Source: RMDB library RFM100, as collected in RNAgym. The record gives the reactivity of an RNA of 177 nucleotides to 2A3. The RNA was probed in 150 mM KOAc, 10 mM MgCl2 and 150 mM bicine (pH 8.5) at 24 C. The 2A3 profile rests on 834 reads. Values cover nucleotides 27 to 126. 2A3 is a SHAPE reagent: it acylates the 2'-hydroxyl of flexible nucleotides of all four kinds.
RNA sequence: GGGAACGACUCGAGUAGAGUCGAAAAGUGCCGACUUUAAACAGCAGCUGCUGGUCUCCUUUGCAAGUGUCCAUCCUUCGACCAUAACCUUUGUGGUUUGGUCUUGGAUGGAGUACCCAUUUGCAAUCGCUGUCUGCUGCUUCGGCAGCAGACAGCGAAAAGAAACAACAACAACAAC
Reactivity to 2A3 in 0.01 (KOAc 150mM, MgCl2 10mM, bicine 150mM(pH8.5), 24C), signal-to-noise 2, nucleotides 027 to 126: g040u020g070c020c020g030a040c050u080u040u090a100a140a000c030a020g090c000a000g010c020u130g000c050u090g020g010u000c020u080c000c060u000u000u000g000c000a000a000g000u030g010u040c000c000a000u000c000c000u010u030c090g020a000c000c000a040u160a110a020c000c020u010u130u300g190u280g020g050u000u040u010g000g000u010c000u040u030g000g000a000u000g000g000a000g040u000a070c000c000c020a020u000u000u020g000c000a010a080u030